[RMDB]
RNA sequence: GGGAACGACUCGAGUAGAGUCGAAAAGAUAUGGACCCUAAGAGCGCUUUGGGUAUCAGGGAAAGGGUGGUCGGAAACGACCACUACUCCCUGAUACCCAAAGAACUACGCUUAUGGGUCCUAAGUCCACCAAGUGGUGGUUCGCCACCACUUGGUGAAAAGAAACAACAACAACAAC
Reactivity to DMS in 0.01 (KOAc 150mM, MgCl2 10mM, bicine 150mM(pH8.5), 24C), signal-to-noise 1, nucleotides 027 to 126: g000a140u010a300u000g000g000a020c000c000c000u000a080a180g010a030g000c090g000c000u000u000u000g010g030g010u000a000u000c000a000g050g020g000a040a050a000g000g000g010u000g000g010u000c020g010g020a040a180a270c010g000a040c000c000a020c000u000a000c040u000c000c010c010u000g020a000u000a000c000c010c000a000a000a000g010a030a090c240u040a300c030g000c000u000u000a300u000g000g010g000u000c000c000u000a000a100g030u010c020